[RMDB]
RNA sequence: GGGAACGACUCGAGUAGAGUCGAAAAAAUCAGUGGGGAUAUAAAGCUUUUAUAAUCAUGUGAAGUAUUAUUAGGCUUUGACUUUAUAAAACGAUGCGUAUACAGUCAAUCACUUCACUAGUUAGCAUGCAGGAAAAUAGUUCGCUAUUUUCCUGCAAAAAGAAACAACAACAACAAC
Reactivity to 2A3 in 0.01 (KOAc 150mM, MgCl2 10mM, bicine 150mM(pH8.5), 24C), signal-to-noise 2, nucleotides 027 to 126: a000a000u070c000a000g010u020g000g010g000g010a000u010a010u030a230a130a000g010c000u000u000u150u120a090u030a070a090u160c060a040u100g040u040g240a120a000g060u010a030u120u000a030u120u090a060g000g030c000u000u000u000g000a000c000u000u020u040a060u010a000a050a030a050c100g080a140u300g020c040g060u010a010u000a000c050a000g010u000c000a000a020u020c000a010c150u060u040c000a010c030u010a030g090u000u030a000g040c050a080
Reactivity to DMS in 0.01 (KOAc 150mM, MgCl2 10mM, bicine 150mM(pH8.5), 24C), signal-to-noise 2, nucleotides 027 to 126: a040a000u030c050a030g020u000g000g000g000g000a120u010a120u030a010a020a090g030c020u040u020u020u010a060u000a020a010u000c010a050u030g000u010g040a080a070g000u020a040u020u000a030u000u020a070g000g000c070u000u000u000g000a020c000u030u000u010a030u000a010a030a110a130c180g000a090u030g020c130g000u000a010u020a040c090a000g000u000c010a010a050u000c090a010c000u000u000c010a000c000u000a150g030u010u030a070g020c160a080

This 177-nucleotide RNA was probed chemically with 2A3 and DMS. The RNA was probed in 150 mM KOAc, 10 mM MgCl2 and 150 mM bicine (pH 8.5) at 24 C. For DMS the reverse transcriptase was MarathonRT. 2A3 adducts were read by reverse transcription with SuperScript II with manganese. The 2A3 profile rests on 835 reads. It was measured as part of the RMDB library OK1LIB.